[RMDB]
RNA sequence: GGGAACGACUCGAGUAGAGUCGAAAAGUGCUGGGCCUGGGGUGGAGUGUACUUGGAGGGGACCCAUCCUCAAUCCACCUCGUUCCGGAGAGCUGAGCCCUCAAGAAGCCCAGGAGAGCAGCUCGGGAUUACGACUACCUUUCGAGGUAGUCGUAAUAAAAGAAACAACAACAACAAC
Reactivity to DMS in 0.01 (KOAc 150mM, MgCl2 10mM, bicine 150mM(pH8.5), 24C), signal-to-noise 4, nucleotides 027 to 126: g020u000g010c010u000g010g020g020c010c090u000g040g010g000g040u000g000g000a040g010u010g000u010a080c230u000u000g000g020a080g000g010g000g020a160c120c070c050a110u010c020c020u000c040a100a110u000c010c010a020c010c010u010c010g020u000u010c000c020g000g010a150g000a020g010c010u000g000a230g010c070c130c010u010c050a090a230g010a110a130g010c020c010c010a020g000g000a110g000a060g000c030a040g000c000u000c010g020g010g000
Reactivity to 2A3 in 0.01 (KOAc 150mM, MgCl2 10mM, bicine 150mM(pH8.5), 24C), signal-to-noise 1, nucleotides 027 to 126: g080u060g040c020u010g010g000g030c000c030u060g050g010g000g000u040g010g020a070g020u130g050u110a110c090u110u130g090g010a010g010g030g020g070a000c000c020c020a090u050c000c000u010c000a010a070u040c000c000a000c000c000u000c010g000u020u000c030c010g050g060a180g010a010g040c000u010g030a010g080c040c020c020u000c010a040a180g080a090a010g030c010c010c010a040g030g020a070g020a010g050c020a000g000c010u010c000g020g020g000